[RMDB]
RNA sequence: GGGAACGACUCGAGUAGAGUCGAAAAGACGCUGAUGCGAUCGACUGUAAGAUAGAUAAACUGAGCAGACAGAUACGUACGGCAAGUAUCGUCGCCAGAAGUACAGUCGCAAAUUGCCGUACGAAGACAUGCGUAGCCAUUUCGAUGGCUACGCAUGAAAAGAAACAACAACAACAAC
Reactivity to DMS in 0.01 (KOAc 150mM, MgCl2 10mM, bicine 150mM(pH8.5), 24C), signal-to-noise 3, nucleotides 027 to 126: g030a090c050g000c030u040g000a090u040g000c020g010a240u010c000g000a020c000u000g000u000a010a080g000a190u060a110g000a130u060a140a080a290c000u030g000a050g020c000a170g010a010c010a120g010a140u000a100c030g000u040a000c000g000g020c000a000a010g010u030a040u020c080g040u000c000g000c000c010a000g010a120a100g000u010a030c000a000g010u000c000g000c230a040a070a070u000u000g010c000c000g000u000a040c080g010a070a120g000a240
Reactivity to 2A3 in 0.01 (KOAc 150mM, MgCl2 10mM, bicine 150mM(pH8.5), 24C), signal-to-noise 7, nucleotides 027 to 126: g070a020c030g000c050u140g120a180u300g030c020g040a080u050c000g000a000c000u010g010u030a070a010g070a300u190a050g140a110u190a130a160a070c000u010g010a020g060c040a080g010a000c010a020g050a030u080a100c000g010u020a000c000g010g000c010a010a020g040u050a040u140c050g000u010c000g000c000c000a010g030a100a000g070u010a000c000a000g010u000c000g000c050a050a110a050u030u000g000c000c000g010u010a020c040g020a040a000g070a000

Structure probing data (DMS and 2A3) for a 177-nucleotide construct. The data come from the RNA Mapping Database (RMDB), library OK1LIB. High 2A3 reactivity points to a flexible backbone, as in loops and unpaired stretches. The DMS profile rests on 4,918 reads. For 2A3, 8,727 sequencing reads were counted.